The data come from the RNA Mapping Database (RMDB), library TTRINS. The record gives the reactivity of an RNA of 177 nucleotides to DMS. For DMS the reverse transcriptase was MarathonRT.

[RMDB]
RNA sequence: GGGAACGACUCGAGUAGAGUCGAAAAGAUAUGGAACAGCGGUAGCACGGCCGAAUGAACUACUGGGUAGGGUCGGAAACGACCUGUACCAGCAUUCGGCCGUGCUAUAAUCGCUGUUCCUAAGUCAUCAAUACUAGAGCUUCGGCUCUAGUAUUGAAAAAGAAACAACAACAACAAC
Reactivity to DMS in 0.01 (KOAc 150mM, MgCl2 10mM, bicine 150mM(pH8.5), 24C), signal-to-noise 3, nucleotides 027 to 126: g020a080u000a300u010g000g000a010a010c000a000g000c000g090g010u010a010g000c000a020c000g000g000c000c000g030a000a020u000g000a110a040c100u000a300c000u000g000g000g000u020a300g000g000g010u010c010g030g000a050a070a300c010g000a000c000c000u000g000u010a300c000c000a010g000c000a010u000u000c000g020g020c000c000g000u010g020c020u000a000u000a190a180u010c000g010c000u010g010u000u000c000c000u000a010a050g010u010c050a200